[RMDB]
RNA sequence: GGGAACGACUCGAGUAGAGUCGAAAAACUUGUGUGAGAAUACUUUUAGUACAAGCGAGUACACGCAGUAUACUGCCACUUGUGUGAGAAUACUUUUAGUACAAGCGAGUACACGCAGUAUACUGCCCAUACCGCCGGAUUUCGAUCCGGCGGUAUGAAAAGAAACAACAACAACAAC
Reactivity to 2A3 in 0.01 (KOAc 150mM, MgCl2 10mM, bicine 150mM(pH8.5), 24C), signal-to-noise 3, nucleotides 027 to 126: a000c030u060u040g050u000g020u020g070a100g110a130a140u180a190c030u010u090u000u140a110g030u060a000c020a070a020g100c040g140a000g060u010a010c070a010c050g000c000a000g000u000a000u000a010c000u000g000c000c000a000c020u010u000g030u010g010u040g130a150g080a090a050u080a070c030u040u100u100u300a080g010u020a030c030a040a000g000c000g030a010g040u110a060c020a000c050g000c000a000g000u000a000u010a000c000u000g000c020c010
Reactivity to DMS in 0.01 (KOAc 150mM, MgCl2 10mM, bicine 150mM(pH8.5), 24C), signal-to-noise 2, nucleotides 027 to 126: a130c000u000u000g010u010g000u010g010a100g000a170a140u020a040c000u040u040u000u060a070g010u010a010c000a140a150g000c050g000a230g000u040a030c080a170c160g030c000a000g000u000a000u000a000c000u000g030c010c280a050c000u000u000g010u000g020u010g000a110g000a110a080u020a060c040u000u060u000u000a020g030u000a070c070a090a130g000c020g040a070g050u060a080c070a160c300g020c000a010g000u000a000u000a000c020u000g040c010c180